[RMDB]
RNA sequence: GGGAACGACUCGAGUAGAGUCGAAAAGACGCGCUGGGCUGGCGUUCGCGACGCGAGGCUGGAUGGCCUUCCCCAUUAUGAUUCUUCUCGCUUCCGGCGGCCCGCGUUGCAGGCCAUGCUGUCCAGGGUAUACUCUCUCUUUCGAGAGAGAGUAUACAAAAGAAACAACAACAACAAC
Reactivity to 2A3 in 0.01 (KOAc 150mM, MgCl2 10mM, bicine 150mM(pH8.5), 24C), signal-to-noise 6, nucleotides 027 to 126: g070a010c070g040c010g010c110u040g010g000g010c020u040g020g020c040g110u100u100c110g000c010g020a010c010g020c010g050a120g040g000c030u040g050g090a170u100g050g020c000c000u040u050c010c010c010c010a060u170u220a150u250g140a080u110u020c030u070u040c040u030c060g040c000u070u030c030c020g040g010c000g000g020c020c020c000g000c000g000u000u020g010c010a010g000g040c010c010a050u160g020c020u060g030u010c010c000a020g070g000
Reactivity to DMS in 0.01 (KOAc 150mM, MgCl2 10mM, bicine 150mM(pH8.5), 24C), signal-to-noise 9, nucleotides 027 to 126: g000a130c120g010c100g010c020u000g000g000g010c010u000g000g000c010g010u010u010c160g020c020g010a020c020g010c010g010a090g020g010c010u000g010g000a100u000g010g010c050c050u000u000c020c000c000c100a130u010u010a090u010g010a100u010u000c060u000u010c040u000c050g010c100u000u000c020c030g010g010c040g010g000c030c010c010g010c010g010u000u000g020c010a070g010g000c010c020a060u010g010c080u000g010u000c010c010a050g000g010